[RMDB]
RNA sequence: GGGAACGACUCGAGUAGAGUCGAAAAUAUACAUCAGAAGUCGGCACAACUCCCGACUCGCGGUGAGCGAUGCAGCGUAGCAAAAGCUACGCAGCUGCUGUGCGGAUGGCUAGCAAAAGCUAGCCUACCUAAUCGUCCGAUUCGUCGGACGAUUAGGAAAAGAAACAACAACAACAAC
Reactivity to 2A3 in 0.01 (KOAc 150mM, MgCl2 10mM, bicine 150mM(pH8.5), 24C), signal-to-noise 5, nucleotides 027 to 126: u120a000u030a030c020a030u050c030a030g070a140a010g090u010c000g020g060c100a030c030a210a300c090u060c020c000c010g010a010c000u010c010g000c030g010g030u130g050a020g010c020g120a120u130g030c010a000g000c010g000u010a000g000c000a010a050a270a170g010c000u010a000c000g000c010a000g000c000u070g000c010u020g030u090g060c040g060g040a070u100g020g000c000u010a010g000c000a080a120a290a010g000c000u000a000g000c000c000u000a010
Reactivity to DMS in 0.01 (KOAc 150mM, MgCl2 10mM, bicine 150mM(pH8.5), 24C), signal-to-noise 4, nucleotides 027 to 126: u050a100u020a170c060a030u030c030a150g020a080a040g020u000c000g020g010c260a130c060a090a170c230u020c120c010c000g000a030c020u000c020g010c300g020g020u020g000a070g020c050g000a120u010g020c010a020g000c010g020u010a010g000c020a160a100a080a160g000c010u010a000c000g000c010a010g020c000u000g040c060u010g000u020g030c060g020g010a090u030g000g010c000u000a000g000c000a100a090a110a120g000c000u020a000g000c000c000u000a010